[RMDB]
An RNA of 177 nucleotides, treated with DMS and read out base by base. For DMS, 1,147 sequencing reads were counted. Reactivities are given for positions 27 through 126. DMS adducts were read by reverse transcription with MarathonRT. It was measured as part of the RMDB library TTRINS.

RNA sequence: GGGAACGACUCGAGUAGAGUCGAAAAGAUAUGGACCAGAAGGAGUCUGUUUCCAGACAUGACCGCACAUCGGAAACGAUGUGAUGGUCAACAGCUGGACUGACAGACUCCUUCUGGUCCUAAGUCAGCUUUAUGCAUACUUCGGUAUGCAUAAAGCAAAAGAAACAACAACAACAAC
Reactivity to DMS in 0.01 (KOAc 150mM, MgCl2 10mM, bicine 150mM(pH8.5), 24C), signal-to-noise 2, nucleotides 027 to 126: g010a030u000a300u000g000g000a010c000c000a020g010a000a040g010g000a040g010u000c000u010g000u000u010u000c020c000a000g010a080c090a270u000g020a000c000c010g000c010a020c000a030u000c000g030g000a110a130a300c000g020a020u000g020u000g000a000u000g000g010u000c000a040a070c300a190g010c000u010g020g020a010c300u000g000a000c020a000g010a070c000u000c000c000u010u000c000u000g000g000u000c000c000u000a020a020g020u020c070a160